[RMDB]
RNA sequence: GGGAACGACUCGAGUAGAGUCGAAAAGGUCUCUUUCGAGAGACCAAAAAUCCUAAGUCAUCCGUACAUCUCUAGCGUGGGCGAGGAUCGGUCGGAAACGACCGGGAGCCUCGGGUGUACGAGAUGAUAUGGAAAAAAAGGAUGUUUCGACAUCCAAGACUUACUUAUUAUUCGUAAUAAGUAAGUCAAAAGAAACAACAACAACAAC
Reactivity to 2A3 in 0.01 (KOAc 150mM, MgCl2 10mM, bicine 150mM(pH8.5), 24C), signal-to-noise 3, nucleotides 027 to 156: g010g000u000c000u000c000u010u110u080c150g080a040g000a000g010a020c010c010a000a020a000a000a000u030c020c000u050a140a010g030u000c010a010u000c000c000g000u000a000c000a010u010c030u040c100u270a160g100c040g130u300g040g040g010c010g010a250g010g000a020u010c000g000g000u000c010g030g060a130a050a080c000g000a000c000c040g010g010g000a010g010c000c000u000c020g010g000g010u000g000u000a000c010g000a010g010a040u000g000a000u000a020u020g010g010a040a040a040a040a030a040a040g040g000a000u020g020u030u200u130c210g030a020c000a000u010c000c000a000a020
Reactivity to DMS in 0.01 (KOAc 150mM, MgCl2 10mM, bicine 150mM(pH8.5), 24C), signal-to-noise 1, nucleotides 027 to 156: g000g000u000c000u000c000u000u000u000c290g000a070g000a060g070a020c000c000a000a030a040a120a090u000c010c000u000a090a270g010u000c030a030u000c010c000g030u010a000c000a030u000c010u010c100u000a160g000c180g040u000g000g060g040c020g000a050g030g120a060u000c050g000g020u000c030g000g000a120a110a240c020g000a000c000c000g000g010g000a220g000c010c010u000c030g000g010g030u060g030u010a070c030g020a220g030a010u000g000a030u020a160u000g000g000a000a000a110a130a070a090a110g010g000a020u000g020u000u010u000c060g020a030c000a020u000c050c030a050a300